About this RNA
The record gives the reactivity of an RNA of 177 nucleotides to 2A3 and DMS. The reactions ran in a buffer of 150 mM KOAc, 10 mM MgCl2 and 150 mM bicine (pH 8.5), at 24 C. The data come from the RNA Mapping Database (RMDB), library TTRDES. For DMS the reverse transcriptase was MarathonRT. For 2A3, 4,009 sequencing reads were counted. 2A3 is a SHAPE reagent: it acylates the 2'-hydroxyl of flexible nucleotides of all four kinds.
RNA sequence: GGGAACGACUCGAGUAGAGUCGAAAAGAUAUGGAGGUAGAUGACUGCAACAGCAUACGUCGGAAACGACGUAUGACAUGCAGCAUCACCUCCUAAGUCAAAACAUUCUCCCUUCGGGGAGAAUGAAGAAUGCGGAUAGGUUCGCCUAUCCGCAUUCAAAAGAAACAACAACAACAAC
Reactivity to 2A3 in 0.01 (KOAc 150mM, MgCl2 10mM, bicine 150mM(pH8.5), 24C), signal-to-noise 2, nucleotides 027 to 126: g050a010u060a070u190g010g010a000g060g030u170a200g190a010u030g170a300c010u000g000c020a070a060c040a300g080c000a020u000a010c000g000u000c000g050g000a070a070a040c020g030a000c000g000u010a000u010g000a000c000a030u050g030c000a000g020c020a000u010c000a000c000c000u020c000c000u010a000a000g010u020c030a000a030a000a120c010a000u010u020c010u030c000c000c020u010u090c280g060g000g000g020a000g000a000a000u000g000a030a020
Reactivity to DMS in 0.01 (KOAc 150mM, MgCl2 10mM, bicine 150mM(pH8.5), 24C), signal-to-noise 2, nucleotides 027 to 126: g000a090u010a300u010g000g010a000g000g000u010a120g090a000u020g000a170c010u020g020c000a040a090c300a220g000c000a040u010a000c000g000u000c000g000g000a220a170a200c010g040a020c000g000u000a000u020g000a020c140a260u000g000c020a010g000c000a070u000c010a060c000c000u000c000c000u000a000a040g000u000c030a110a090a130a150c000a000u000u000c000u000c000c000c000u000u000c280g050g000g030g010a020g000a010a000u000g000a100a130